[RMDB]
RNA sequence: GGGAACGACUCGAGUAGAGUCGAAAACUGACAAGGUUCGCCUUGUCAGAAAAAAGAUAUGGAGGUUCGUGUUCGCAACAGCGUACCUCGGAAACGAGGUACGACAUGCGGGACACGACCUCCUAAGUCAAAAAACUCCUGGCUUCGGCCAGGAGAAGAUCUGAAUCGUGUUCGCACGAUUCAGAUCAAAAGAAACAACAACAACAAC
Reactivity to 2A3 in 0.01 (KOAc 150mM, MgCl2 10mM, bicine 150mM(pH8.5), 24C), signal-to-noise 1, nucleotides 027 to 156: c000u000g010a000c000a010a000g020g050u040u120c130g140c010c000u010u000g000u000c020a010g000a000a000a000a000a000a000g050a040u030a040u090g000g000a010g000g020u230u250c010g000u010g000u010u000c040g000c100a080a130c030a230g040c000g000u000a000c010c000u000c020g000g010a090a080a020c010g000a000g000g000u010a000c000g010a000c000a010u020g060c050g030g060g020a020c000a000c000g000a000c000c000u000c000c000u000a000a000g000u000c010a000a000a050a080a100a170c000u000c010c000u000g000g000c010u080u090c300g200g030c000c000a000g050g000a000g000a000a000